[RMDB]
RNA sequence: GGGAACGACUCGAGUAGAGUCGAAAAUAAGAUGGUUCAAACACAUCUUAGCCACUAUGUUCUUAACAUAGAUUGGUUGUGGUUUGCAUUUGAGACUGGUUUGGCAUACAUGCUCUAUACCUCGGCCUGAGGAUCCGCUUCGGCGGAUCCAAAAGAAACAACAACAACAAC
Reactivity to 2A3 in 0.01 (KOAc 150mM, MgCl2 10mM, bicine 150mM(pH8.5), 24C), signal-to-noise 2, nucleotides 027 to 129: u060a000a000g000a000u000g000g000u100u150c070a130a000a000c070a010c000a140u000c000u030u030a030g030c020c020a000c000u000a000u000g060u050u100c150u240u210a020a000c000a010u010a060g040a110u000u200g060g020u010u020g000u000g040g090u000u000u070g000c020a020u000u030u220g030a070g030a130c070u020g000g070u000u010u040g050g040c000a000u030a080c040a030u090g000c000u030c000u050a040u000a000c000c000u020c050g070g000c000c030u000g050a070
An RNA of 170 nucleotides, treated with 2A3 and read out base by base.
The RNA was probed in 150 mM KOAc, 10 mM MgCl2 and 150 mM bicine (pH 8.5) at 24 C.
Source: RMDB library 15KLIB, as collected in RNAgym.